[RMDB]
Chemical mapping of a 177-nucleotide RNA with DMS and 2A3. For DMS the reverse transcriptase was MarathonRT. The reactions ran in a buffer of 150 mM KOAc, 10 mM MgCl2 and 150 mM bicine (pH 8.5), at 24 C.

RNA sequence: GGGAACGACUCGAGUAGAGUCGAAAACUCGGAAGGAGGAGAUCAUGGCCGGGCCGGCCUGGGCUGCCGAAGCUCAGCAGCUCUGAAGUCCUUUGUGUAAGUCGCGCCGCCUUUUGGCGAGAGGAGCGCAAUAUCUCACGUUCGCGUGAGAUAUUGCAAAAGAAACAACAACAACAAC
Reactivity to DMS in 0.01 (KOAc 150mM, MgCl2 10mM, bicine 150mM(pH8.5), 24C), signal-to-noise 4, nucleotides 027 to 126: c010u000c020g000g000a080a080g000g010a050g000g000a070g000a070u030c100a100u000g030g020c010c050g000g000g010c090c060g000g030c050c030u000g000g000g020c020u010g020c050c060g000a100a110g000c090u000c040a150g010c060a080g040c010u000c010u010g000a110a070g010u010c010c010u000u000u030g020u000g000u020a100a150g020u000c040g010c050g000c020c030g000c050c040u010u010u020u040g000g000c000g010a060g000a070g000g010a160g000c120
Reactivity to 2A3 in 0.01 (KOAc 150mM, MgCl2 10mM, bicine 150mM(pH8.5), 24C), signal-to-noise 4, nucleotides 027 to 126: c010u010c020g050g080a070a050g020g020a040g020g000a050g020a070u090c030a080u140g080g000c010c020g020g060g000c040c060g000g030c010c010u020g000g060g000c010u030g050c030c040g100a070a010g020c010u010c020a020g010c000a020g000c000u000c010u050g100a070a040g040u040c010c000u010u110u040g110u010g020u060a080a070g030u060c020g000c010g000c050c010g050c010c020u070u140u090u210g010g020c020g010a070g020a040g060g050a030g010c030